[RMDB]
RNA sequence: GGGAACGACUCGAGUAGAGUCGAAAAAGGGAUGGUAAAGGCAAAAGAAAUAAACGGUCUCCGGUAAAGCAUGAUUCCGAAGGGAUGACGUUUCCGGAGGAUCCGAUGGAAAGCCUCCCCGGAUGGAUCGUAUACGUCUCUUCGGAGACGUAUACGAAAAAGAAACAACAACAACAAC
Reactivity to 2A3 in 0.01 (KOAc 150mM, MgCl2 10mM, bicine 150mM(pH8.5), 24C), signal-to-noise 4, nucleotides 027 to 126: a000g090g000g050a120u180g010g090u150a120a080a070g050g010c070a040a000a080a050g140a060a080a050u200a050a180a030c000g000g020u010c010u030c000c010g030g010u050a070a000a000g030c020a050u120g000a040u040u000c000c000g060a090a080g130g010g000a000u020g020a000c040g000u000u020u120c010c010g010g000a010g010g000a030u070c000c000g010a020u060g060g020a060a030a020g010c000c000u010c020c030c000c000g010g040a040u050g040g030a030
Reactivity to DMS in 0.01 (KOAc 150mM, MgCl2 10mM, bicine 150mM(pH8.5), 24C), signal-to-noise 4, nucleotides 027 to 126: a090g010g000g000a090u000g030g040u020a060a110a100g020g000c090a100a060a080a100g020a100a090a080u040a090a100a190c050g000g000u020c000u000c000c030g000g010u010a040a030a020g020c030a020u040g010a100u020u000c010c000g000a160a100g000g000g010a000u000g000a270c240g000u000u000u030c000c000g020g000a040g000g000a020u040c000c020g010a040u020g000g010a060a100a160g010c010c000u010c050c040c000c020g000g010a110u020g020g000a200

Background: The record gives the reactivity of an RNA of 177 nucleotides to 2A3 and DMS. Values are in units of 0.01, from 0 to 300, in steps of 10. For 2A3 the reverse transcriptase was SuperScript II with manganese. Source: RMDB libraries RFM100 and RFMREP, as collected in RNAgym.